Background
This 177-nucleotide RNA was probed chemically with 2A3. Source: RMDB library RFM100, as collected in RNAgym. The RNA was probed in 150 mM KOAc, 10 mM MgCl2 and 150 mM bicine (pH 8.5) at 24 C.
[RMDB]
RNA sequence: GGGAACGACUCGAGUAGAGUCGAAAAGACUCUUUAUAUUGGGAGCUCGAUGAGAUCGACCCUAACCGAGCCUAGAUAUCGAGAUUUGGUUCGGGUCAAUCUCAUCAAUCUCCCAAUACUUUACAAAGGAACUACCACAAUUCGUUGUGGUAGUUCCAAAAGAAACAACAACAACAAC
Reactivity to 2A3 in 0.01 (KOAc 150mM, MgCl2 10mM, bicine 150mM(pH8.5), 24C), signal-to-noise 3, nucleotides 027 to 126: g050a030c040u040c000u080u170u070a130u010a000u020u000g000g010g010a000g010c060u050c080g030a000u000g000a000g000a000u000c000g010a010c010c000c010u000a000a000c010c000g030a020g050c010c010u130a190g100a290u260a160u240c190g060a070g000a130u000u000u050g000g010u010u000c010g000g000g000u010c000a000a000u000c000u000c000a000u000c000a000a020u010c000u000c000c020c030a000a000u000a000c000u050u090u050a040c070a020a070a070